[RMDB]
RNA sequence: GGGAACGACUCGAGUAGAGUCGAAAACAGGCAUCCUUCAGAAGCGGGGCAGCCCAAGACCGAGAUGGGGGAAGAAGGUGGUUUGCCUGCCCUCCCAGGCUUGCUGGGUGUCUGCCCGUGGCUGGGCAGGUUUGUAACGGUUCGCCGUUACAAACCUAAAAGAAACAACAACAACAAC
Reactivity to 2A3 in 0.01 (KOAc 150mM, MgCl2 10mM, bicine 150mM(pH8.5), 24C), signal-to-noise 2, nucleotides 027 to 126: c010a000g080g000c030a070u020c000c010u070u060c020a060g050a190a000g110c010g020g060g020g000c000a020g000c020c000c000a040a040g100a090c080c090g000a030g000a100u080g010g000g040g000g020a000a100g080a030a000g040g070u090g040g300u180u250u230g010c010c000u030g020c000c000c000u060c010c010c000a030g170g040c080u050u060g010c000u030g010g040g010u030g000u080c040u030g020c020c030c010g030u060g050g000c060u010g000g010g000c040
Reactivity to DMS in 0.01 (KOAc 150mM, MgCl2 10mM, bicine 150mM(pH8.5), 24C), signal-to-noise 3, nucleotides 027 to 126: c090a070g000g000c060a100u010c030c020u010u000c050a070g010a080a100g020c050g000g000g000g010c050a120g020c010c020c020a060a060g010a100c100c050g010a070g000a120u000g000g000g000g020g000a090a080g000a090a020g000g010u000g030g010u010u020u010g010c040c030u000g000c180c020c010u000c020c010c020a070g000g010c040u000u000g000c030u000g010g010g030u010g010u010c060u000g010c000c000c010g020u010g020g020c060u000g000g000g020c110
Structure probing data (2A3 and DMS) for a 177-nucleotide construct. For DMS, 3,868 sequencing reads were counted. For DMS the reverse transcriptase was MarathonRT. For 2A3 the reverse transcriptase was SuperScript II with manganese. Conditions: 150 mM KOAc, 10 mM MgCl2 and 150 mM bicine (pH 8.5), 24 C. Reactivities are given for positions 27 through 126.